[RMDB]
RNA sequence: GGGAACGACUCGAGUAGAGUCGAAAAGAUAUGGAGGCUGAACUACGCUCCAACGAUGAAAUUGAUCGGAAACGAUCAAUGGAGUGGAGCGCAGCCUCCUAAGUCAAAAUCAUCCUUCGGGAUGAAAGUUAUGCGUAUCGUUCGCGAUACGCAUAACAAAAGAAACAACAACAACAAC
Reactivity to 2A3 in 0.01 (KOAc 150mM, MgCl2 10mM, bicine 150mM(pH8.5), 24C), signal-to-noise 2, nucleotides 027 to 126: g010a000u050a020u130g010g000a030g010g020c000u000g020a070a090c120u140a060c300g010c020u060c010c030a050a140c040g220a300u110g020a030a030a060u010u020g000a010u000c000g020g050a050a040a050c010g040a000u000c000a010a000u020g000g000a030g000u030g000g000a000g000c010g020c010a000g010c000c000u020c000c010u000a000a000g000u000c000a000a010a000a120u020c000a000u000c000c000u030u080c240g140g010g010a010u010g020a080a000a010
Reactivity to DMS in 0.01 (KOAc 150mM, MgCl2 10mM, bicine 150mM(pH8.5), 24C), signal-to-noise 2, nucleotides 027 to 126: g000a070u000a300u010g000g000a010g020g010c000u000g010a040a030c140u020a300c020g020c000u010c000c000a050a070c110g000a180u000g000a070a140a020u000u000g000a000u010c000g000g000a090a050a170c020g030a010u000c000a000a020u000g000g010a080g020u000g000g000a000g010c100g000c000a020g010c000c000u000c000c000u000a000a070g030u000c010a100a040a090a070u010c020a010u000c020c000u000u010c230g030g000g020a030u000g000a010a020a090